The data come from the RNA Mapping Database (RMDB), library RNAMAK. An RNA of 207 nucleotides, treated with DMS and 2A3 and read out base by base.
RNA sequence: GGGAACGACUCGAGUAGAGUCGAAAAGCGUACUACGACUUUGGGAGGCUUGGAUUUACAUGGGUUUGUAUCCCAAAUAGGAUAUGAUCCAUGUUGUCAGCCUCCCUUUGUCGUAUCGCAAAACACGAUGAAUACGCUUCGGCGUAUUCAUCGUGAAGGAUAACAAUGUCUUCGGACAUUGUUAUCCAAAAGAAACAACAACAACAAC
Reactivity to DMS in 0.01 (KOAc 150mM, MgCl2 10mM, bicine 150mM(pH8.5), 24C), signal-to-noise 2, nucleotides 027 to 156: g020c000g030u000a040c100u010a010c000g000a010c000u000u010u010g010g010g010a030g010g010c000u010u000g060g020a050u000u010u000a010c000a010u010g000g020g020u000u000u010g060u000a010u000c000c000c010a040a150a210u010a070g010g010a020u010a000u010g010a010u000c000c000a020u000g010u000u020g020u010c010a060g010c020c010u030c000c000c000u000u000u000g000u000c000g040u010a000u000c020g040c020a070a050a110a240c000a010c000g010a010u000g000a030a010u000a000c000g030c010u000u010c300g060g010c010g010u000a000u000u000c000a000u010c010g030u010g000a050a130
Reactivity to 2A3 in 0.01 (KOAc 150mM, MgCl2 10mM, bicine 150mM(pH8.5), 24C), signal-to-noise 5, nucleotides 027 to 156: g000c010g040u130a100c050u010a000c020g000a010c010u010u010u010g010g000g000a000g010g000c040u120u190g150g010a070u300u300u080a010c000a010u010g030g000g050u050u090u300g010u040a000u010c000c030c060a130a300a170u300a090g000g000a000u000a010u030g010a000u010c000c000a000u000g010u000u000g010u000c000a000g010c000c000u000c000c000c000u000u000u000g000u000c000g010u010a000u020c000g010c000a010a040a030a020c000a010c000g010a000u000g000a000a000u020a020c000g000c020u080u160c300g040g000c000g000u000a010u000u000c000a000u000c000g000u000g000a010a010
For 2A3 the reverse transcriptase was SuperScript II with manganese.
For 2A3, 5,983 sequencing reads were counted.